[RMDB]
This 177-nucleotide RNA was probed chemically with DMS and 2A3. Conditions: 150 mM KOAc, 10 mM MgCl2 and 150 mM bicine (pH 8.5), 24 C. The 2A3 profile rests on 80,902 reads. Values cover nucleotides 27 to 126. For 2A3 the reverse transcriptase was SuperScript II with manganese. In probing experiments dimethyl sulfate is read out at A N1 and C N3, which are open when not base-paired. It was measured as part of the RMDB library OK1LIB.
RNA sequence: GGGAACGACUCGAGUAGAGUCGAAAACUUCGUGAACUAGCGACGAUGCAUUAGGUCCUUCGUUAUCUAACCGAAACAUCGUUACUAGUGUUAGAAUAAAUCAAGAUAGGCAGGCUAUCAUAGAAAGACGCAGUGUGUUAUUCGUAGCACGCUGCGUAAAAGAAACAACAACAACAAC
Reactivity to DMS in 0.01 (KOAc 150mM, MgCl2 10mM, bicine 150mM(pH8.5), 24C), signal-to-noise 9, nucleotides 027 to 126: c100u000u010c060g010u020g020a060a010c000u000a000g010c040g010a000c000g010a010u000g000c040a040u020u010a200g000g000u000c120c120u010u030c150g010u020u030a080u020c110u030a100a030c020c010g000a220a120a150c030a000u000c000g010u000u000a220c010u000a000g000u000g000u010u020a100g000a050a060u030a060a070a070u040c090a090a080g000a020u000a010g000g010c140a090g010g000c010u000a010u000c010a090u030a100g000a080a100a080g000
Reactivity to 2A3 in 0.01 (KOAc 150mM, MgCl2 10mM, bicine 150mM(pH8.5), 24C), signal-to-noise 9, nucleotides 027 to 126: c030u080u060c030g120u080g100a030a000c000u000a000g010c000g020a000c000g000a000u000g000c020a020u080u070a010g010g020u040c040c010u170u190c160g150u130u150a150u140c090u080a030a030c010c010g010a020a000a000c000a000u000c000g000u000u000a000c000u000a000g000u000g010u020u080a010g020a020a060u100a090a060a040u130c070a070a030g010a020u010a010g030g100c110a020g120g010c020u010a010u030c020a020u030a030g130a030a120a010g100